[RMDB]
RNA sequence: GGGAACGACUCGAGUAGAGUCGAAAAAUGCCGUGAACGUGGCGGCGAGAGGGGAGGCGGAGGUCUGGCUGACGUUCCGGCCUAUGAACGCGAUCCAGGCGUCGGCGAUCUACGAUGGCGAUCGGGAGAUCCGGUUCGUCUACACUGACCCGGACGAUAUUUUACAUUACUUCGGUAAUGUAAAAUAAAAAGAAACAACAACAACAAC
Reactivity to DMS in 0.01 (KOAc 150mM, MgCl2 10mM, bicine 150mM(pH8.5), 24C), signal-to-noise 2, nucleotides 027 to 156: a130u000g010c030c010g000u020g010a080a050c080g070u010g030g040c020g050g020c040g000a170g020a130g010g010g000g020a150g050g010c040g060g020a090g010g030u010c040u010g010g020c070u010g000a060c040g020u000u000c010c020g020g000c060c080u010a110u010g020a060a120c050g000c020g010a130u000c010c020a110g030g010c050g020u000c040g020g030c010g010a110u010c020u000a060c050g000a090u000g020g020c060g000a060u000c030g010g030g010a230g010a120u010c030c030g020g000u000u000c020g010u000c010u000a100c040a070c030u010g000a090c020c010c010g000g010a040c060g020a170
Reactivity to 2A3 in 0.01 (KOAc 150mM, MgCl2 10mM, bicine 150mM(pH8.5), 24C), signal-to-noise 3, nucleotides 027 to 156: a000u080g000c010c000g040u080g060a120a040c020g010u060g060g010c000g020g010c040g010a070g020a060g050g060g000g000a040g010g050c080g050g060a030g020g010u070c050u060g080g000c040u060g030a020c010g000u070u000c010c000g040g000c000c020u180a210u170g080a080a030c050g000c040g070a050u040c020c030a080g060g000c040g020u010c000g020g010c030g060a080u040c020u080a050c060g060a030u110g030g030c010g020a010u010c020g000g000g020a180g030a070u160c000c010g010g000u050u140c000g000u000c000u040a040c080a030c090u050g020a040c000c000c000g000g010a010c010g020a020